[RMDB]
The record gives the reactivity of an RNA of 177 nucleotides to DMS.
RNA sequence: GGGAACGACUCGAGUAGAGUCGAAAAACGCGAGCUCGGCGGGCGUCGGCAUCGCGGGCGAGCAGCCGUGCCGCGACACGACGAGCGCGCCGCACGCGUUCGCCGCGCGCGCCGCGUCGGCGAACGAGUCGCAUUACGCAUUCGUGCGUAAUGCGACAAAAGAAACAACAACAACAAC
Reactivity to DMS in 0.01 (KOAc 150mM, MgCl2 10mM, bicine 150mM(pH8.5), 24C), signal-to-noise 1, nucleotides 027 to 126: a160c130g020c030g000a060g030c010u000c010g030g020c000g010g000g040c020g000u020c000g020g010c060a070u000c270g000c070g010g010g010c040g030a110g030c100a140g020c070c010g020u000g000c010c010g030c020g000a060c100a050c060g000a050c000g010a090g020c000g000c010g040c010c110g000c060a080c070g020c010g000u000u000c030g000c010c000g020c110g030c040g040c300g000c150c070g010c040g050u010c040g030g010c010g000a010a050c030g000a080